The record gives the reactivity of an RNA of 177 nucleotides to 2A3.
2A3 adducts were read by reverse transcription with SuperScript II with manganese.
2A3 is a SHAPE reagent: it acylates the 2'-hydroxyl of flexible nucleotides of all four kinds.
Conditions: 150 mM KOAc, 10 mM MgCl2 and 150 mM bicine (pH 8.5), 24 C.
Values cover nucleotides 27 to 126.
RNA sequence: GGGAACGACUCGAGUAGAGUCGAAAAGCUCGGAGACGAGCAAGGCUGACAAAACGCUGUCCCGACCUCCACGUGGUGUCGGCUGGAUAAUGCUGCAUUAUGUUGCAUUUAUCAACUGGGAAGAAAAACCUCCUCACGAGUUCGCUCGUGAGGAGGUAAAAGAAACAACAACAACAAC
Reactivity to 2A3 in 0.01 (KOAc 150mM, MgCl2 10mM, bicine 150mM(pH8.5), 24C), signal-to-noise 2, nucleotides 027 to 126: g000c020u010c000g020g060a110g010a070c000g030a000g010c010a000a050g030g000c020u030g000a020c000a000a070a010a010c040g060c090u040g060u010c000c000c000g000a040c020c000u030c020c100a130c050g100u080g020g030u020g000u000c000g010g000c000u000g000g000a000u010a020a030u030g000c020u000g010c050a070u160u220a120u300g060u020u040g020c030a020u060u020u180a040u030c020a000a010c070u110g060g030g070a000a070g090a030a100a000a000
Source: RMDB library OK1LIB, as collected in RNAgym.